[RMDB]
RNA sequence: GGGAACGACUCGAGUAGAGUCGAAAACAACCCAACUCCUACUCAAUACGUCCUCGUCGUACAGAACGGUAACAUGUUUUCCGAAAAUCCGCGCUUGGGUAUACGAGUAUACACCUUACCCAACCCUCCAACCACCUAAAGUUCGCUUUAGGUGGAACGUAAAAAUUGUGUUCGCACAAUUUUUACGAAAAGAAACAACAACAACAAC
Reactivity to 2A3 in 0.01 (KOAc 150mM, MgCl2 10mM, bicine 150mM(pH8.5), 24C), signal-to-noise 7, nucleotides 027 to 156: c040a030a070c010c000c010a030a050c050u060c030c040u070a070c010u060c080a050a100u060a120c040g050u040c010c010u030c020g060u020c020g020u060a060c030a080g090a180a030c010g010g020u050a060a030c050a120u130g070u080u090u060u030c020c010g040a070a040a010a080u040c030c020g050c020g010c110u030u020g000g050g010u020a030u030a030c060g010a020g070u020a010u040a050c100a060c010c010u010u060a030c000c010c000a010a030c020c000c010u000c010c010a040a100c000c000a000c000c000u010a010a010a000g020u040u110c180g060c080u000u000u000a000g000g000u000g000g000a000a010
Reactivity to DMS in 0.01 (KOAc 150mM, MgCl2 10mM, bicine 150mM(pH8.5), 24C), signal-to-noise 2, nucleotides 027 to 156: c040a120a230c020c020c030a100a110c060u010c040c030u000a030c020u010c010a120a120u000a140c030g020u000c050c020u030c030g000u000c050g070u010a160c050a050g010a100a060c030g010g000u000a040a170c090a080u040g010u000u000u000u010c000c010g000a110a130a130a090u000c010c060g040c050g020c080u000u030g020g010g020u000a100u010a080c090g000a210g020u000a100u010a120c040a080c040c020u010u000a040c000c000c000a040a150c000c000c000u020c010c060a070a200c010c000a030c000c010u000a000a030a000g020u010u010c300g060c010u000u010u000a000g000g020u000g020g010a000a080